The record gives the reactivity of an RNA of 177 nucleotides to DMS and 2A3.
For 2A3 the reverse transcriptase was SuperScript II with manganese.
RNA sequence: GGGAACGACUCGAGUAGAGUCGAAAAGAUAUGGAUCUCACCACGGGAGAACGAUAUUCGGAAACGAAUAUCUGUUCAUCGAUCGUGUUGAGAUCCUAAGUCAAAGGACCACCUUCGGGUGGUCCAACUAGUCUUGUUUCUUCGGAAACAAGACUAGAAAAGAAACAACAACAACAAC
Reactivity to DMS in 0.01 (KOAc 150mM, MgCl2 10mM, bicine 150mM(pH8.5), 24C), signal-to-noise 2, nucleotides 027 to 126: g030a030u000a300u030g000g000a010u000c000u000c010a010c030c000a000c010g000g010g030a160g020a010a000c010g000a030u000a010u000u000c010g000g000a120a070a160c000g010a030a020u000a000u000c000u030g030u010u000c000a230u010c250g010a140u000c000g020u000g000u000u020g000a010g020a000u000c000c000u000a000a090g000u000c020a060a150a180g020g010a020c000c000a020c000c000u000u020c290g020g010g040u010g020g020u000c000c010a000a080
Reactivity to 2A3 in 0.01 (KOAc 150mM, MgCl2 10mM, bicine 150mM(pH8.5), 24C), signal-to-noise 1, nucleotides 027 to 126: g010a010u030a050u110g000g000a030u000c000u000c000a020c080c000a010c010g000g080g000a300g010a100a010c000g000a000u000a010u000u020c000g010g020a000a060a030c000g010a000a010u020a010u000c060u060g000u000u000c010a080u300c020g130a210u130c000g000u010g000u040u010g010a000g000a020u000c000c000u000a000a000g000u000c060a040a080a210g000g000a010c010c010a010c020c040u100u130c300g120g000g000u000g000g000u000c000c000a010a010
Reactivities are given for positions 27 through 126.